Chemical mapping of a 177-nucleotide RNA with DMS and 2A3. For DMS the reverse transcriptase was MarathonRT.
RNA sequence: GGGAACGACUCGAGUAGAGUCGAAAACUGUGGUUCACACCUGACCUCCUGAGCAGAAAAGAAAAAAGAAGACGGCUCGGAGGAGCGCUUCAGGGAUCCCCGGGGAAACCUGGAGCGAACUGGCAAACCUAUACUGUUAGUUCGCUAACAGUAUAGGAAAAGAAACAACAACAACAAC
Reactivity to DMS in 0.01 (KOAc 150mM, MgCl2 10mM, bicine 150mM(pH8.5), 24C), signal-to-noise 1, nucleotides 027 to 126: c060u000g000u030g000g000u020u030c110a060c100a130c040c040u000g050a250c020c020u000c000c000u040g060a000g020c000a060g030a090a050a150a240g020a040a090a080a120a160a140g000a150a050g010a260c250g030g050c000u000c010g000g010a020g000g000a010g000c000g020c010u000u000c000a000g000g000g000a210u000c000c000c010c250g040g000g010g020a010a040a290c000c020u000g010g000a010g020c000g010a000a040c120u000g000g000c160a040a020a120
Reactivity to 2A3 in 0.01 (KOAc 150mM, MgCl2 10mM, bicine 150mM(pH8.5), 24C), signal-to-noise 2, nucleotides 027 to 126: c010u040g010u080g170g090u160u190c040a040c000a020c100c010u060g120a100c000c000u000c000c020u180g000a000g000c060a020g220a100a160a070a050g300a020a260a110a080a000a020g100a090a050g090a010c090g050g000c000u000c000g000g020a000g000g000a010g040c000g000c010u000u000c010a000g000g010g000a010u020c000c020c020c030g290g060g010g000a000a010a000c000c020u010g000g010a000g000c010g000a010a010c030u020g020g000c070a090a000a040
It was measured as part of the RMDB library VIROID.
The RNA was probed in 150 mM KOAc, 10 mM MgCl2 and 150 mM bicine (pH 8.5) at 24 C.